This 207-nucleotide RNA was probed chemically with 2A3 and DMS. For DMS, 6,575 sequencing reads were counted. The data come from the RNA Mapping Database (RMDB), library RNAMAK. DMS (dimethyl sulfate) methylates the pairing face of unpaired adenines and cytosines. For 2A3, 10,748 sequencing reads were counted.
[RMDB]
RNA sequence: GGGAACGACUCGAGUAGAGUCGAAAAGGGGUCGUAAAGUCGUCUUGGAUUUACUUUUGACGGACUGAAGCCUCCACGGUCCGAUAAGUUGUCAGACGGUCUUUACGACGGAGGCACCCAAAAUCUUAACUUUACUGUUCGCAGUAAAGUUAAGAAAGUAUCCUGAUAUGUUCGCAUAUCAGGAUACAAAAGAAACAACAACAACAAC
Reactivity to 2A3 in 0.01 (KOAc 150mM, MgCl2 10mM, bicine 150mM(pH8.5), 24C), signal-to-noise 8, nucleotides 027 to 156: g040g000g020g010u010c000g000u010a000a010a000g010u010c010g030u020c080u150u270g210g030a160u200u250u200a090c050u090u100u080u120g240a100c010g000g000a000c010u020g040a060a010g030c000c020u020c000c010a030c020g000g000u000c000c000g010a040u040a060a020g040u120u140g190u290c120a020g010a010c000g010g020u090c000u010u000u000a000c000g010a000c000g000g000a010g000g000c020a030c000c010c000a040a090a030a070u000c000u000u000a000a000c000u000u000u000a000c000u000g070u090u090c300g010c140a000g000u000a010a000a000g000u000u000a000a000g000a000a000a000
Reactivity to DMS in 0.01 (KOAc 150mM, MgCl2 10mM, bicine 150mM(pH8.5), 24C), signal-to-noise 2, nucleotides 027 to 156: g010g000g030g030u000c000g040u000a010a020a030g020u000c010g020u000c030u020u020g030g030a180u000u000u000a030c030u010u000u000u010g020a300c130g030g020a030c000u010g030a060a090g010c050c020u000c030c040a300c040g020g000u000c000c000g020a080u000a010a050g020u000u000g010u010c080a040g000a040c000g000g000u000c010u000u000u000a020c000g010a010c010g010g030a020g040g030c040a120c010c010c010a090a070a080a170u000c010u000u010a010a020c000u000u000u000a010c000u000g030u000u010c300g040c030a010g010u000a010a010a030g010u000u000a000a000g020a010a040a210